[RMDB]
RNA sequence: GGGAACGACUCGAGUAGAGUCGAAAAGAAAGGGGGCACUGACUGGUGAUGCUGAUAUUGGAGUGCAUCUGAGGCUGUUGUAGAAAUAACAUGGGUUGUUGAUUACAACAUUGCCAAUGAUUAUAACGAACCGUACAGGGUUCGCCCUGUACGGUUCAAAAGAAACAACAACAACAAC
Reactivity to DMS in 0.01 (KOAc 150mM, MgCl2 10mM, bicine 150mM(pH8.5), 24C), signal-to-noise 1, nucleotides 027 to 126: g000a110a090a120g000g000g000g040g000c100a100c060u000g010a040c050u000g000g020u000g030a100u040g030c120u000g000a080u000a100u010u000g000g000a170g010u010g000c070a060u010c000u000g000a300g000g000c020u000g020u010u000g010u000a010g020a110a030a040u010a000a020c020a190u000g030g040g000u000u000g020u000u000g000a130u000u000a040c020a030a020c000a080u010u010g060c000c010a020a160u010g020a050u010u000a100u000a110a070c300
Chemical mapping of a 177-nucleotide RNA with DMS. DMS adducts were read by reverse transcription with MarathonRT. The data come from the RNA Mapping Database (RMDB), library RFMREP.